[RMDB]
Description: Conditions: 150 mM KOAc, 10 mM MgCl2 and 150 mM bicine (pH 8.5), 24 C. An RNA of 177 nucleotides, treated with DMS and 2A3 and read out base by base. In probing experiments dimethyl sulfate is read out at A N1 and C N3, which are open when not base-paired. 2A3 is a SHAPE reagent: it acylates the 2'-hydroxyl of flexible nucleotides of all four kinds. The 2A3 profile rests on 864 reads. It was measured as part of the RMDB library OK1LIB.
RNA sequence: GGGAACGACUCGAGUAGAGUCGAAAACGAAUGAUUUGAACCGUCAAAUGGCUAAAAACGAUAAAGAUAAUGAGUUAUUCGCUAAAGAGUUUAAAAAAGUAUUACAAAAUUCUAAAGAUGGCGACAGCUCCAUCACGUCAUUCGUGACGUGAUGGAGAAAAGAAACAACAACAACAAC
Reactivity to DMS in 0.01 (KOAc 150mM, MgCl2 10mM, bicine 150mM(pH8.5), 24C), signal-to-noise 1, nucleotides 027 to 126: c080g000a110a070u020g000a030u060u000u000g000a130a190c060c010g000u020c060a080a040a090u000g060g000c030u040a000a000a130a150a010c060g040a020u010a080a170a110g030a070u000a030a050u000g000a080g000u020u000a040u040u000c000g070c010u010a060a090a020g000a050g010u010u000u000a000a000a020a050a080a190g000u010a000u000u070a130c040a060a120a000a060u010u000c000u000a050a120a220g000a120u040g020g010c000g020a110c150a060g000
Reactivity to 2A3 in 0.01 (KOAc 150mM, MgCl2 10mM, bicine 150mM(pH8.5), 24C), signal-to-noise 1, nucleotides 027 to 126: c020g050a000a060u160g070a070u100u010u020g040a090a030c000c000g010u030c030a010a070a070u060g050g000c080u050a000a000a000a120a050c040g040a220u170a090a140a030g270a160u040a100a000u090g020a050g200u070u020a050u090u000c000g000c050u040a060a070a100g000a040g010u000u090u200a000a150a000a000a030a000g070u110a090u040u030a020c010a000a050a110a000u040u020c000u070a100a000a000g060a080u090g100g010c000g030a030c000a020g000